RNA sequence: GGGAACGACUCGAGUAGAGUCGAAAACGGUUCUCCAUGACUCCUUCAUGCCUUCAGAACCAGUACCAUGUGGGAGACUCAUGGCGGCCACAUGAGAUGCAUCCUGGCCCCAGCUCUGGACUACUAAUACCUCGAGGAUAUUCGUAUCCUCGAGGUAAAAAGAAACAACAACAACAAC
Reactivity to 2A3 in 0.01 (KOAc 150mM, MgCl2 10mM, bicine 150mM(pH8.5), 24C), signal-to-noise 1, nucleotides 027 to 126: c040g020g000u150u100c040u010c020c020a030u010g000a020c000u000c000c000u000u030c000a000u010g010c030c010u150u180c120a050g050a280a080c060c010a000g050u060a090c020c010a000u000g000u000g010g000g000a010g030a060c040u050c060a000u020g040g000c030g030g030c040c030a060c000a020u230g040a070g000a100u120g080c010a020u030c000c010u020g080g030c000c000c000c010a000g010c020u000c010u050g100g010a030c000u040a020c010u080a090a180
Reactivity to DMS in 0.01 (KOAc 150mM, MgCl2 10mM, bicine 150mM(pH8.5), 24C), signal-to-noise 2, nucleotides 027 to 126: c100g030g020u000u000c020u010c020c020a010u000g000a070c020u010c030c020u010u020c020a050u000g000c090c020u010u010c100a050g020a070a120c090c110a100g010u000a070c300c010a040u000g020u000g000g000g000a020g010a150c170u000c020a000u000g010g020c250g000g010c010c010a080c110a080u000g000a060g030a120u000g000c060a050u000c000c050u000g020g010c000c000c000c000a120g020c040u000c040u000g000g010a070c080u000a060c110u010a060a170
Chemical mapping of a 177-nucleotide RNA with 2A3 and DMS. Source: RMDB library OK2TST, as collected in RNAgym. The RNA was probed in 150 mM KOAc, 10 mM MgCl2 and 150 mM bicine (pH 8.5) at 24 C. For DMS the reverse transcriptase was MarathonRT. The 2A3 profile rests on 1,126 reads.